[RMDB]
RNA sequence: GGGAACGACUCGAGUAGAGUCGAAAACUGUGAGGCUUCGGCCUCACAGAUAGGUUUCUUUUUAGUGAUUUUUCCAAACCCCUUUGUGCAAAAAUCAUUAUACUCGCGUACGUUUCGACGUACGCAAACAACUCAAAUGUUUCGACAUUUGAGUUGUAAAAGAAACAACAACAACAAC
Reactivity to 2A3 in 0.01 (KOAc 150mM, MgCl2 10mM, bicine 150mM(pH8.5), 24C), signal-to-noise 2, nucleotides 027 to 126: c000u000g000u010g000a010g020g000c050u060u130c300g130g010c020c000u010c000a010c010a010g000a000u020a010g020g000u010u010u020c010u000u030u020u010u010a020g000u000g010a010u000u000u000u050u000c000c000a010a030a050c060c030c010c030u030u090u070g050u070g050c070a000a000a000a010a000u000c020a000u000u040a040u080a040c140u120c120g000c000g010u000a000c000g000u000u050u080c140g030a010c000g020u010a000c000g000c000a010a000
Reactivity to DMS in 0.01 (KOAc 150mM, MgCl2 10mM, bicine 150mM(pH8.5), 24C), signal-to-noise 3, nucleotides 027 to 126: c000u010g000u000g000a010g000g030c000u000u000c160g020g000c010c000u000c000a010c000a000g010a060u000a090g000g010u000u000u000c000u000u000u000u000u000a020g020u000g000a010u000u000u000u000u000c000c000a010a020a060c020c020c050c060u010u010u000g020u000g000c160a010a030a010a020a010u000c000a010u000u000a190u010a080c230u000c150g000c000g010u000a010c000g010u000u000u010c160g010a020c000g020u010a000c000g010c010a010a030
An RNA of 177 nucleotides, treated with 2A3 and DMS and read out base by base. For DMS the reverse transcriptase was MarathonRT. The reactions ran in a buffer of 150 mM KOAc, 10 mM MgCl2 and 150 mM bicine (pH 8.5), at 24 C. The DMS profile rests on 3,664 reads.